[RMDB]
RNA sequence: GGGAACGACUCGAGUAGAGUCGAAAAAGGUGGAGAUGCCAUGCCGACCCGAAGAGGAAAGAAGGACGCGAGACGCGAACCUGUGAGUGGAAACCCGCUUUAUUCACUGGGGUCGACAACUCUGGGGCAUUCAUGUAUGCUUCGGCAUACAUGAAUGAAAAGAAACAACAACAACAAC
Reactivity to DMS in 0.01 (KOAc 150mM, MgCl2 10mM, bicine 150mM(pH8.5), 24C), signal-to-noise 3, nucleotides 027 to 126: a050g000g020u010g020g010a090g000a070u010g020c030c050a120u000g040c000c020g020a090c020c010c020g020a090a080g010a100g010g010a030a060a100g000a120a040g000g000a230c060g010c040g040a130g010a100c100g010c030g000a060a080c020c000u010g010u000g010a030g010u000g000g000a100a070a160c160c000c010g020c080u000u010u010a090u010u000c060a040c040u000g020g010g010g000u000c020g010a050c070a040a060c060u000c010u000g020g000g000g000
Reactivity to 2A3 in 0.01 (KOAc 150mM, MgCl2 10mM, bicine 150mM(pH8.5), 24C), signal-to-noise 2, nucleotides 027 to 126: a030g020g000u040g000g070a100g000a070u140g060c020c010a040u070g030c010c000g030a030c010c020c030g040a120a010g040a030g090g000a050a050a060g090a020a010g030g000a000c010g040c010g040a130g070a120c090g030c000g020a100a240c000c020u050g020u040g050a020g020u040g020g020a130a070a090c000c030c000g020c020u100u090u090a140u060u120c050a020c060u050g010g000g030g000u020c010g010a030c000a080a020c010u020c030u040g000g010g000g000
Background: The data come from the RNA Mapping Database (RMDB), library VIROID. An RNA of 177 nucleotides, treated with DMS and 2A3 and read out base by base. DMS adducts were read by reverse transcription with MarathonRT. Reactivities are rounded to 0.1 and cut off at 0 and 3. 2A3 adducts were read by reverse transcription with SuperScript II with manganese. For 2A3, 2,652 sequencing reads were counted. The reactions ran in a buffer of 150 mM KOAc, 10 mM MgCl2 and 150 mM bicine (pH 8.5), at 24 C.